[RMDB]
RNA sequence: GGGAACGACUCGAGUAGAGUCGAAAAUCUGCUGGGAUUAUCAAUUUUCCAUGGCAAGGAGUGUGUGGCAGCAUCUUAUGUGUAUUAAUGACUGCUACAUUGAUUGAUCAUUCCAAAGGCCAUAAAAUGCUUUUCAUAAGUUCGCUUAUGAAAAGCAAAAAGAAACAACAACAACAAC
Reactivity to DMS in 0.01 (KOAc 150mM, MgCl2 10mM, bicine 150mM(pH8.5), 24C), signal-to-noise 3, nucleotides 027 to 126: u000c030u000g010c180u020g000g000g000a020u000u000a010u010c020a020a020u010u000u020u000c010c020a070u000g000g010c140a130a190g000g000a050g030u010g020u000g010u000g010g020c010a010g030c030a060u000c140u000u000a040u000g000u020g030u000a080u010u000a050a030u010g000a140c000u000g000c010u010a010c000a020u000u010g010a070u000u000g010a040u000c040a050u010u000c000c010a010a090a190g000g010c040c030a060u010a030a040a080a120
Reactivity to 2A3 in 0.01 (KOAc 150mM, MgCl2 10mM, bicine 150mM(pH8.5), 24C), signal-to-noise 1, nucleotides 027 to 126: u000c020u050g030c080u010g000g000g020a000u000u000a030u040c000a000a010u000u060u240u000c020c040a050u060g170g000c110a100a170g030g010a010g100u120g010u000g000u000g000g060c000a010g020c010a040u020c030u100u180a120u160g260u000g090u070a080u150u030a110a020u030g170a190c000u000g020c000u000a000c000a010u000u050g020a000u020u030g000a010u030c010a000u040u000c010c010a050a040a030g040g000c020c000a040u110a040a050a000a020
Chemical mapping of a 177-nucleotide RNA with DMS and 2A3. Conditions: 150 mM KOAc, 10 mM MgCl2 and 150 mM bicine (pH 8.5), 24 C. It was measured as part of the RMDB library OK2TRN. Values cover nucleotides 27 to 126. For 2A3, 1,146 sequencing reads were counted. 2A3 adducts were read by reverse transcription with SuperScript II with manganese.